[RMDB]
RNA sequence: GGGAACGACUCGAGUAGAGUCGAAAAUUCCAUUUGAGUAUCCUGAAAACGGGCUUUUCAGCAUGGAACGUACAUAUUAAAUAGUAGGAGUGCAUAGUGGCCCGUAUAGCGGGCAUUAACAUUCCUGAAAACGUGAAAAGGUUCGCCUUUUCACGAAGAUUACGGUGGUGUUCGCACCACCGUAAUCAAAAGAAACAACAACAACAAC
Reactivity to 2A3 in 0.01 (KOAc 150mM, MgCl2 10mM, bicine 150mM(pH8.5), 24C), signal-to-noise 1, nucleotides 027 to 156: u020u000c000c010a010u000u060u090g020a020g020u050a040u100c000c000u000g080a070a080a130a140c170g100g060g030c100u050u000u000u040c120a110g000c100a040u070g010g000a060a000c050g110u240a040c100a090u150a040u120u300a100a150a150u100a060g150u050a000g000g000a000g010u000g040c150a000u030a080g040u000g170g300c000c000c000g000u000a020u010a040g070c000g000g000g000c000a000u010u000a000a000c020a010u000u000c000c000u000g060a080a110a000a000c000g000u000g040a010a000a000a000g000g000u060u070c140g110c010c000u000u000u030u000c000a000c000g000a000a020

This 207-nucleotide RNA was probed chemically with 2A3. 2A3 adducts were read by reverse transcription with SuperScript II with manganese. For 2A3, 510 sequencing reads were counted. Conditions: 150 mM KOAc, 10 mM MgCl2 and 150 mM bicine (pH 8.5), 24 C.